RNA sequence: GGGAACGACUCGAGUAGAGUCGAAAAAGCCUGGCUUGGUGGUAUGUGCCUGUGGUCCCACCGAUGCAGGAGGCUGAGGUAGGAGGAUCGCUUAAGCCGGGAGGUUGAGGCUGCAGUGAGCUGUGACCACAUCACUACACUCCAGCAUGGGAGACAGCUCCAAAAAUGGGUUCGCCCAUUUUUGGAGAAAAGAAACAACAACAACAAC
Reactivity to 2A3 in 0.01 (KOAc 150mM, MgCl2 10mM, bicine 150mM(pH8.5), 24C), signal-to-noise 1, nucleotides 027 to 156: a000g030c010c000u020g020g020c000u060u100g030g020u090g020g030u120a050u280g020u110g000c020c030u060g000u000g020g010u010c060c020c010a000c000c000g050a000u020g000c020a100g010g120a050g190g000c060u070g010a030g100g000u160a100g010g040a060g050g030a080u100c010g000c050u030u110a040a030g010c020c050g030g030g010a090g000g060u030u170g040a020g020g060c030u010g090c000a000g000u000g100a000g030c070u030g060u140g010a010c010c010a000c010a040u010c010a010c000u120a000c040a060c010u020c000c000a010g050c050a100u040g030g000g020a070g010a000c030a000g080
The record gives the reactivity of an RNA of 207 nucleotides to 2A3. The RNA was probed in 150 mM KOAc, 10 mM MgCl2 and 150 mM bicine (pH 8.5) at 24 C.